RNA sequence: GGGAACGACUCGAGUAGAGUCGAAAACGAGGGGUGGGCGAAAGUUGCCAUGAGACCGUAACUUUCGUAGUCAUUGAGAAAGGGGCAGGUCUCGCUCUUUUGUCAUUGCGGUUGCCUAGAGGCAUGGAAAACCAUGACAGGUUCGCCUGUCAUGGAAGAUUCUUAAUAGGUUCGCCUAUUAAGAAUCAAAAGAAACAACAACAACAAC
Reactivity to 2A3 in 0.01 (KOAc 150mM, MgCl2 10mM, bicine 150mM(pH8.5), 24C), signal-to-noise 3, nucleotides 027 to 156: c070g020a070g030g010g000g060u170g010g000g050c030g010a020a000a000g050u050u030g000c040c030a090u120g020a020g010a030c000c010g000u010a000a010c000u010u030u010c030g010u010a040g060u070c080a110u080u200g040a040g020a070a040a010g010g010g020g030c050a030g050g040u030c020u000c030g010c010u050c000u030u100u020u100g090u040c030a090u030u090g020c030g040g000u070u080g010c010c000u060a090g020a100g070g000c040a040u060g060g030a020a080a000a080c010c010a000u010g000a000c000a000g040g000u050u060c120g040c040c000u000g010u000c000a000u000g000g000a000a010
Reactivity to DMS in 0.01 (KOAc 150mM, MgCl2 10mM, bicine 150mM(pH8.5), 24C), signal-to-noise 1, nucleotides 027 to 156: c070g000a130g010g000g000g000u000g000g000g050c020g030a010a020a050g030u010u000g010c000c040a200u010g000a000g040a020c030c030g000u000a040a070c040u000u000u000c040g030u010a110g020u020c090a150u020u030g020a240g010a050a030a050g000g030g010g000c110a080g020g000u000c020u000c010g010c090u010c020u000u000u000u000g020u000c010a170u010u000g030c030g000g020u000u010g020c000c030u020a100g030a140g040g020c030a090u010g020g030a080a080a090a120c000c000a030u000g000a040c020a010g000g010u000u000c300g030c020c000u000g000u000c010a000u010g030g000a010a010